[RMDB]
RNA sequence: GGGAACGACUCGAGUAGAGUCGAAAACAUUAGCUUCGGCAUCCCACCCUACGGCUUCGAAAAGGUGAGAUGAGCUCAGCAAGGGAACUCAAGAGACUCAACUCAGAGAACUCAGAGAGAGAAUAAACAAUAACACCGAAUUCGUUCGGUGUUAUUGAAAAGAAACAACAACAACAAC
Reactivity to DMS in 0.01 (KOAc 150mM, MgCl2 10mM, bicine 150mM(pH8.5), 24C), signal-to-noise 3, nucleotides 027 to 126: c060a100u020u010a090g010c050u000u010c150g030g010c040a070u010c010c000c000a120c030c010c010u010a220c060g000g000c180u020u010c040g010a050a050a160a100g000g020u000g020a030g000a040u000g000a070g010c010u010c060a050g020c110a080a070g000g010g020a050a160c030u000c010a120a170g010a070g010a110c080u000c060a090a080c070u010c060a120g010a090g000a080a060c000u010c040a080g000a190g000a060g000a070g000a120a060u010a050a090a140
Reactivity to 2A3 in 0.01 (KOAc 150mM, MgCl2 10mM, bicine 150mM(pH8.5), 24C), signal-to-noise 3, nucleotides 027 to 126: c020a050u120u200a020g020c020u040u060c060g070g000c010a030u030c030c010c010a000c010c000c000u040a010c020g160g010c050u150u220c080g050a070a030a030a040g000g030u010g010a050g000a050u030g020a020g040c000u030c070a010g020c010a000a040g060g000g040a060a040c020u000c040a070a000g030a020g020a110c010u000c040a040a080c040u010c120a060g010a020g010a120a050c000u010c080a010g040a010g000a010g000a010g050a190a090u160a180a100a030